An RNA of 177 nucleotides, treated with DMS and 2A3 and read out base by base. The 2A3 profile rests on 6,846 reads. The data come from the RNA Mapping Database (RMDB), library TTRDEL. DMS adducts were read by reverse transcription with MarathonRT. The DMS profile rests on 5,345 reads. For 2A3 the reverse transcriptase was SuperScript II with manganese. The RNA was probed in 150 mM KOAc, 10 mM MgCl2 and 150 mM bicine (pH 8.5) at 24 C.

RNA sequence: GGGAACGACUCGAGUAGAGUCGAAAAGAUAUGGAUCCGCAAGGGAGAAACUUCGGAAACGAACUUUCGACGAUCUUGGGAUCCUAAGUCAAAGUUCUCUUCCGUGCUUCGGCACGGAAGAGAACAAUCAUAGCUCUUAGUUCGCUAAGAGCUAUGAAAAAGAAACAACAACAACAAC
Reactivity to DMS in 0.01 (KOAc 150mM, MgCl2 10mM, bicine 150mM(pH8.5), 24C), signal-to-noise 4, nucleotides 027 to 126: g010a030u000a300u000g000g000a020u010c010c000g000c020a010a010g000g000g000a060g000a020a010a020c130u000u000c000g010g000a090a080a190c000g000a010a010c100u000u000u000c010g000a070c240g000a020u010c010u000u000g000g010g010a030u000c010c000u000a010a050g010u000c030a100a100a110g000u000u000c000u000c000u000u000c000c000g000u000g000c010u000u020c210g020g010c010a010c000g010g000a000a000g000a000g000a000a000c000a020a060
Reactivity to 2A3 in 0.01 (KOAc 150mM, MgCl2 10mM, bicine 150mM(pH8.5), 24C), signal-to-noise 3, nucleotides 027 to 126: g020a010u070a030u130g000g010a000u010c010c030g270c300a010a010g030g030g000a030g000a030a020a010c020u020u010c010g020g000a060a050a050c010g030a010a010c010u030u020u000c090g290a300c020g010a120u000c000u000u000g010g020g010a000u000c020c000u000a080a020g050u030c050a180a030a030g000u000u000c000u020c000u010u010c010c000g060u010g030c020u070u130c300g140g010c030a000c000g000g000a020a000g000a000g000a000a000c000a010a000